[RMDB]
RNA sequence: GGGAACGACUCGAGUAGAGUCGAAAAUGGCAAUCUAAUAGUGCCACUAGACUUGGCUGAAUUUAGGGCAAGGAUGAAAGGUGAGUUUGUGCGACAACCAGGUAUUUCUCGUAAGUGUGUCAGUACCGUGGGAACGACUUUUCGAAGUCGUUCCCACAAAAGAAACAACAACAACAAC
Reactivity to 2A3 in 0.01 (KOAc 150mM, MgCl2 10mM, bicine 150mM(pH8.5), 24C), signal-to-noise 1, nucleotides 027 to 126: u030g030g000c030a030a000u020c190u300a000a150u140a080g150u070g030c000c000a030c000u000a000g130a010c010u000u050g000g010c010u020g110a100a200u070u050u170a260g000g000g060c000a080a000g090g030a000u050g000a200a000a070g050g020u030g010a140g000u000u100u200g090u010g000c040g020a000c000a000a020c000c000a000g010g030u070a000u000u090u000c000u000c030g080u130a000a100g200u150g000u000g020u150c100a070g000u000a000c020c020

This 177-nucleotide RNA was probed chemically with 2A3.
Reactivities are given for positions 27 through 126.
The 2A3 profile rests on 527 reads.
High 2A3 reactivity points to a flexible backbone, as in loops and unpaired stretches.